Conditions: 150 mM KOAc, 10 mM MgCl2 and 150 mM bicine (pH 8.5), 24 C. An RNA of 177 nucleotides, treated with 2A3 and DMS and read out base by base. It was measured as part of the RMDB library OK2TST. The DMS profile rests on 3,466 reads. High 2A3 reactivity points to a flexible backbone, as in loops and unpaired stretches.
RNA sequence: GGGAACGACUCGAGUAGAGUCGAAAAGAAGAGCUCUGGGCCUCAUCACUGCACGGAUGAGGAAGAACCUAGAAUUGGAGGAUGCAAGGACUCCUCCAGGUGGUCAGCAUGGCAGGGGCCUGGCAGGACGUAUCGUUCGAUUCGUCGAACGAUACGUAAAAGAAACAACAACAACAAC
Reactivity to 2A3 in 0.01 (KOAc 150mM, MgCl2 10mM, bicine 150mM(pH8.5), 24C), signal-to-noise 1, nucleotides 027 to 126: g080a040a020g020a000g020c010u020c010u040g040g020g010c000c030u000c000a000u030c000a030c120u160g020c060a050c130g020g000a020u020g000a010g000g000a010a020g040a010a010c000c000u010a010g030a100a060u100u050g040g010a040g010g040a000u070g020c040a060a140g130g040a140c030u010c000c000u010c000c010a000g040g030u050g000g070u080c030a010g030c040a070u070g020g000c030a010g030g000g000g000c000c030u030g000g000c030a010g040g090
Reactivity to DMS in 0.01 (KOAc 150mM, MgCl2 10mM, bicine 150mM(pH8.5), 24C), signal-to-noise 3, nucleotides 027 to 126: g000a110a090g010a080g010c080u010c010u010g020g010g010c020c000u000c010a010u000c000a070c040u000g020c120a070c140g010g000a020u000g000a020g010g020a090a050g000a100a300c020c010u000a030g000a060a200u010u000g020g000a040g010g010a060u000g010c090a180a110g000g010a110c120u000c000c000u000c010c020a020g010g010u010g010g010u010c040a090g000c060a090u000g000g020c080a040g020g000g000g010c050c010u000g000g010c070a070g000g000